Chemical mapping of a 177-nucleotide RNA with DMS.
[RMDB]
RNA sequence: GGGAACGACUCGAGUAGAGUCGAAAAUUAAAGCCAUUCGUGGCUUUAAACUCUGGUGUCCCGAAAAGGCUCGUGCGCGAUCCCACCCGAACCAGUUUUCGAUUAAGGAUAAGUUCGCUUAUCCUAAAGGAGUACAUAACUUCGGUUAUGUACUCCUAAAAGAAACAACAACAACAAC
Reactivity to DMS in 0.01 (KOAc 150mM, MgCl2 10mM, bicine 150mM(pH8.5), 24C), signal-to-noise 1, nucleotides 027 to 126: u000u000a000a000a010g010c000c000a030u000u010c210g040u000g000g020c000u000u000u000a000a010a080c090u000c040u000g000g010u000g030u000c020c010c030g000a050a050a190a110g000g010c020u000c040g010u000g000c090g040c030g000a090u010c020c000c000a190c080c030c030g050a070a040c080c070a150g020u000u000u000u010c010g010a170u000u010a100a030g010g010a020u000a000a000g020u000u010c240g030c010u000u000a000u000c000c010u000a050a080

For DMS the reverse transcriptase was MarathonRT. The data come from the RNA Mapping Database (RMDB), library M2PK50.